[RMDB]
RNA sequence: GGGAACGACUCGAGUAGAGUCGAAAAGUGCAGCAGUUCGCUGCUGCACAAAAGGCAACGUAUCAUUGCUUCGAAGCCAAACUAGAAACUAGAAAGCAGUGAAAAGACACUUCUUCGGAAGUGUCAACACGCUUAUGGGGUUCGCCCCAUAAGCGUGAAAAGAAACAACAACAACAAC
Reactivity to 2A3 in 0.01 (KOAc 150mM, MgCl2 10mM, bicine 150mM(pH8.5), 24C), signal-to-noise 1, nucleotides 027 to 126: g010u010g030c000a000g040c000a010g000u000u140c150g040c120u000g050c000u000g010c040a000c000a000a080a000a000g020g040c000a040a040c030g070u060a020u200c000a010u010u020g000c010u050u040c040g050a040a010g000c030c030a070a000a000c010u060a030g120a090a090a020c010u030a050g100a040a070a000g000c000a010g000u060g040a020a000a080a060g000a000c000a000c000u020u050c010u010u060c220g100g030a000a000g000u000g000u000c000a010a000